This 177-nucleotide RNA was probed chemically with 2A3 and DMS. Values cover nucleotides 27 to 126. The data come from the RNA Mapping Database (RMDB), library OK1LIB. The 2A3 profile rests on 972 reads.
RNA sequence: GGGAACGACUCGAGUAGAGUCGAAAAGAUGGAGACAGGAAGUCGAUGAUGAUGCGCAAAGAGAUCGAGAAGGGCACUAACCGCCAGAUAGUGAAUACUCGAGAGCGCUGGCGGUACUUCCUAAGAACCACUAGUCGACGUUCGCGUCGACUAGUGGAAAAGAAACAACAACAACAAC
Reactivity to 2A3 in 0.01 (KOAc 150mM, MgCl2 10mM, bicine 150mM(pH8.5), 24C), signal-to-noise 2, nucleotides 027 to 126: g100a020u150g030g060a000g020a000c040a000g020g020a070a000g010u040c040g010a030u200g000a000u010g020a000u130g060c110g000c050a090a180a060g070a070g030a120u020c010g000a010g000a240a060g020g000g000c050a000c010u060a000a050c050c050g020c000c030a040g010a110u190a020g070u070g010a100a020u130a090c020u070c030g120a090g020a070g100c060g000c000u000g030g000c010g000g010u010a010c000u060u030c000c010u060a160a060g000a040a050
Reactivity to DMS in 0.01 (KOAc 150mM, MgCl2 10mM, bicine 150mM(pH8.5), 24C), signal-to-noise 1, nucleotides 027 to 126: g000a050u000g000g000a080g030a150c100a090g030g020a040a050g000u000c000g040a120u030g000a160u100g000a050u050g000c010g000c000a110a110a130g030a170g010a200u000c050g000a000g020a020a080g010g000g040c000a000c150u000a090a090c060c060g000c020c030a000g000a170u000a010g000u000g000a010a080u000a240c030u030c000g010a020g000a090g000c030g040c000u010g000g000c030g000g000u010a030c060u000u000c010c000u000a090a090g000a120a180
Values are in units of 0.01, from 0 to 300, in steps of 10. The DMS profile rests on 1,243 reads.